This 207-nucleotide RNA was probed chemically with 2A3. It was measured as part of the RMDB library OK3TST. The RNA was probed in 150 mM KOAc, 10 mM MgCl2 and 150 mM bicine (pH 8.5) at 24 C. 2A3 adducts were read by reverse transcription with SuperScript II with manganese.

[RMDB]
RNA sequence: GGGAACGACUCGAGUAGAGUCGAAAAAAAUCCACUUACAAAAUUGACGUGGUGGAUGCGAUUAUCGAUGCGUUCUAUGACGGUAUGUACGCGUUUGAAGAUUACGCUAUCACUAACAAUCCAACAUGGAAAGUCGAACAUAUGAGCCAAGAGGCAGCACGCAGAUACUGUUCGCAGUAUCUGCGUGAAAAGAAACAACAACAACAAC
Reactivity to 2A3 in 0.01 (KOAc 150mM, MgCl2 10mM, bicine 150mM(pH8.5), 24C), signal-to-noise 2, nucleotides 027 to 156: a000a000a000u000c020c020a030c030u150u200a090c090a090a140a180a260u140u130g060a090c100g010u010g000g000u000g000g000a040u030g000c030g040a080u130u000a010u110c020g000a000u060g050c040g050u050u000c000u020a030u050g070a050c100g020g060u010a010u160g030u020a000c030g000c000g010u010u020u210g070a080a060g020a060u030u120a010c020g000c010u040a010u060c010a000c050u040a160a000c000a040a000u040c060c020a040a040c030a160u130g000g010a060a100a060g030u020c030g000a040a020c030a030u120a070u090g090a050g000c020c000a100a090g090a090g060g030c000a000g000